[RMDB]
RNA sequence: GGGAACGACUCGAGUAGAGUCGAAAAUUGAAAUCGAACCGUCCUGUUAUCGAAAGAUAGGCAGAAGAUACGAAAUGUGUGACAGCAUGGGAAGUAAAGGCAGACCGUGGUUCCCUUGAGUAUCUUAAUUAGGGGGACGAGUUCGCUCGUCCCCCAACUGAGGUUAAUGGUUCGCCAUUAACCUCAGAAAAGAAACAACAACAACAAC
Reactivity to 2A3 in 0.01 (KOAc 150mM, MgCl2 10mM, bicine 150mM(pH8.5), 24C), signal-to-noise 2, nucleotides 027 to 156: u140u090g040a020a010a070u130c030g030a020a070c020c030g070u090c000c000u000g000u040u040a030u030c030g030a020a070a090g040a020u080a070g050g000c030a030g010a090a010g000a000u010a020c020g020a080a030a020u100g030u000g050u060g020a020c030a020g020c020a070u050g020g000g010a020a010g030u050a130a090a040g060g050c060a040g010a140c020c040g040u080g030g120u030u000c030c000c000u000u000g010a010g000u010a020u000c000u040u040a120a120u160u210a130g000g000g000g030g000a000c000g000a000g010u060u050c140g020c070u000c000g000u020c000c020c000c000c000a000a000
Reactivity to DMS in 0.01 (KOAc 150mM, MgCl2 10mM, bicine 150mM(pH8.5), 24C), signal-to-noise 2, nucleotides 027 to 156: u010u010g020a070a080a130u000c040g030a120a140c010c030g000u010c000c010u000g020u010u000a050u000c040g040a180a130a250g010a070u000a040g030g010c020a050g020a080a050g000a040u000a050c000g000a080a080a080u020g000u000g030u000g040a130c090a170g020c030a020u000g010g000g000a100a080g030u000a080a040a080g000g020c060a110g010a110c010c040g000u000g000g000u000u000c000c000c000u000u000g020a190g010u000a040u000c060u000u000a040a150u000u010a190g000g010g010g010g040a000c030g000a050g040u000u010c140g000c010u000c000g000u000c010c000c000c000c000a010a010
Annotation:
The record gives the reactivity of an RNA of 207 nucleotides to 2A3 and DMS. The RNA was probed in 150 mM KOAc, 10 mM MgCl2 and 150 mM bicine (pH 8.5) at 24 C.